[RMDB]
RNA sequence: GGGAACGACUCGAGUAGAGUCGAAAAGAAACGAAGGUUGGCUAAUCCUGGUAGGACAUCAGGAGGUUAGUGCAAUCGCAUAUGCCAGCCUGACAACAAAAAGGAAAAAGAAAGAAGAAAAAGAAAACAUUUUAGCACCAUUCGUGGUGCUAAAAUGAAAAGAAACAACAACAACAAC
Reactivity to DMS in 0.01 (KOAc 150mM, MgCl2 10mM, bicine 150mM(pH8.5), 24C), signal-to-noise 5, nucleotides 027 to 126: g010a080a100a070c130g000a160a000g010g000u000u010g000g010c000u000a080a090u000c000c000u000g000g000u010a120g030g020a300c150a010u020c000a000g000g000a000g000g000u010u010a150g010u020g010c020a130a110u050c160g000c000a020u000a040u050g000c010c000a020g000c010c000u000g000a250c200a070a070c110a030a050a040a060a070g030g030a040a030a080a100a030g000a080a060a040g010a070a070g000a050a020a040a080a130g010a070a050a080a110
Reactivity to 2A3 in 0.01 (KOAc 150mM, MgCl2 10mM, bicine 150mM(pH8.5), 24C), signal-to-noise 5, nucleotides 027 to 126: g030a030a030a000c090g010a050a000g000g000u000u010g010g020c040u050a010a060u000c000c000u000g000g020u050a100g110g200a030c020a070u010c000a010g000g010a020g030g030u160u150a050g000u020g010c010a070a210u280c140g000c000a030u050a020u080g000c000c000a010g000c000c000u010g040a020c030a130a010c010a010a070a020a020a050g130g060a070a100a030a010a000g150a070a080a030g170a050a050g070a060a070a010a020a000g140a010a130a010a000
This 177-nucleotide RNA was probed chemically with DMS and 2A3. The DMS profile rests on 8,431 reads. The RNA was probed in 150 mM KOAc, 10 mM MgCl2 and 150 mM bicine (pH 8.5) at 24 C. It was measured as part of the RMDB library OK1LIB.